This 207-nucleotide RNA was probed chemically with 2A3 and DMS. The reactions ran in a buffer of 150 mM KOAc, 10 mM MgCl2 and 150 mM bicine (pH 8.5), at 24 C. The 2A3 profile rests on 2,932 reads.
RNA sequence: GGGAACGACUCGAGUAGAGUCGAAAACUGGUUCGAAUCCCCGUGGUCGCGGCAGACUCUCGGCCAAUGGAGCCGAGCCACACUCGGCUGUGUCGGCCGGGGGAGUCUCCUCCCCACACUCGUGCGAGUAAUCCACGAUCUGCUGUGGCGCGCUAAGCCAGAUGAUAAAGUUCGCUUUAUCAUCUGGAAAAGAAACAACAACAACAAC
Reactivity to 2A3 in 0.01 (KOAc 150mM, MgCl2 10mM, bicine 150mM(pH8.5), 24C), signal-to-noise 2, nucleotides 027 to 156: c070u130g090g050u100u060c060g060a080a110u030c020c020c020c000g000u080g090g010u040c010g000c010g010g000c020a010g000a030c010u020c040u050c110g000g000c010c000a040a030u080g050g030a010g000c000c000g020a010g020c040c040a100c000a030c010u000c000g000g000c000u120g140u000g010u300c000g000g000c000c020g000g000g000g010g000a010g030u030c070u060c040c030u030c010c000c010c000a060c000a010c040u040c010g000u030g030c170g020a040g030u150a070a120u020c020c010a010c030g010a070u020c020u030g000c010u000g010u020g010g020c000g000c000g000c030u070a020a000g040
Reactivity to DMS in 0.01 (KOAc 150mM, MgCl2 10mM, bicine 150mM(pH8.5), 24C), signal-to-noise 2, nucleotides 027 to 156: c080u000g000g040u010u030c050g000a120a100u000c000c020c000c030g090u000g050g020u000c020g040c050g020g020c040a050g000a080c060u020c040u010c000g020g000c000c110a040a060u010g020g000a090g000c000c010g020a020g000c040c180a150c090a300c000u010c010g020g000c000u000g030u010g000u020c050g010g020c010c000g000g000g000g050g000a080g010u000c060u000c060c030u010c010c000c000c000a170c170a010c050u000c010g000u000g000c120g010a090g040u000a110a170u010c000c010a050c080g010a050u010c010u000g030c020u000g000u010g020g030c080g000c080g000c070u000a070a190g010